[RMDB]
RNA sequence: GGGAACGACUCGAGUAGAGUCGAAAACAACCACACCUUGAUGCCAGAAGCCCUUGAGUGCUGGGAUGAAAAACUGGUGCGCAGCUUGCUGCCGCGUCAUUUUGUCAUCAUCAAGCAGAUCAAUGCGUAGUCCGAAGUGUUUCGACACUUCGGACUAAAAAGAAACAACAACAACAAC
Reactivity to DMS in 0.01 (KOAc 150mM, MgCl2 10mM, bicine 150mM(pH8.5), 24C), signal-to-noise 1, nucleotides 027 to 126: c140a110a080c030c070a090c060a090c100c010u000u000g000a080u000g020c030c040a100g000a110a130g020c020c020c050u010u000g010a050g030u010g030c010u000g000g000g010a030u000g000a040a030a000a000a030c080u020g020g020u050g010c010g010c000a020g000c030u010u020g030c000u000g020c120c070g050c010g010u010c010a050u000u000u000u020g000u000c010a020u000c010a120u000c040a080a060g010c040a040g000a130u010c000a030a030u000g000c200g040
Reactivity to 2A3 in 0.01 (KOAc 150mM, MgCl2 10mM, bicine 150mM(pH8.5), 24C), signal-to-noise 1, nucleotides 027 to 126: c030a010a070c000c000a000c020a030c010c010u020u070g040a030u050g060c040c070a080g000a100a040g030c000c010c000u040u000g030a030g020u070g030c000u020g050g040g000a000u020g040a000a020a020a020a020c070u020g050g000u000g010c000g020c000a010g000c000u070u150g020c000u030g070c050c040g000c000g040u000c000a000u030u000u020u070g180u060c010a040u000c010a070u030c090a110a000g000c000a000g030a200u030c050a040a110u120g180c040g110